[RMDB]
Chemical mapping of a 207-nucleotide RNA with 2A3 and DMS. The DMS profile rests on 2,948 reads. Conditions: 150 mM KOAc, 10 mM MgCl2 and 150 mM bicine (pH 8.5), 24 C. DMS adducts were read by reverse transcription with MarathonRT.
RNA sequence: GGGAACGACUCGAGUAGAGUCGAAAAGUAGUUGCAGAGGCGCUGGUAGAGGUAGUUGAGCGUGGUGGCGAUGUGCUCGGUGACGAAGAAGUACAUGAUCCAGCGGCGGAGCGGCAUCUCGCUGACGUCGCCCAGGGCUUCCAAGCGCUCCAUGGUCUAUGUAUGUCACGUUCGCGUGACAUACAUAAAAAGAAACAACAACAACAAC
Reactivity to 2A3 in 0.01 (KOAc 150mM, MgCl2 10mM, bicine 150mM(pH8.5), 24C), signal-to-noise 2, nucleotides 027 to 156: g050u030a010g020u050u160g040c000a000g020a010g080g040c020g000c040u010g000g050u070a090g010a020g070g030u130a090g020u090u110g120a010g030c060g000u040g040g050u030g050g030c070g040a050u060g020u030g040c060u040c110g020g080u070g030a000c090g050a050a020g050a060a020g030u050a050c060a120u140g010a040u080c010c000a010g020c000g030g000c050g010g050a040g010c010g000g040c060a110u060c100u060c070g000c030u000g030a100c000g020u010c010g000c000c030c020a040g000g010g010c000u050u000c040c020a090a000g020c000g030c030u000c020c000a060u100g020g000u020c020
Reactivity to DMS in 0.01 (KOAc 150mM, MgCl2 10mM, bicine 150mM(pH8.5), 24C), signal-to-noise 1, nucleotides 027 to 156: g030u010a040g000u010u000g010c010a040g000a100g010g000c040g050c060u010g000g020u010a060g000a070g010g020u000a060g010u000u000g000a040g020c030g070u000g010g000u020g000g030c050g040a120u000g020u000g000c010u000c000g000g000u000g010a220c040g030a120a110g020a050a060g030u000a070c080a080u010g000a140u000c060c030a090g000c040g020g000c010g000g010a080g030c020g000g000c140a100u010c140u010c110g030c030u010g010a060c030g020u000c010g000c010c000c030a070g040g010g000c030u000u010c040c050a050a100g040c040g000c020u000c030c050a080u010g000g020u020c050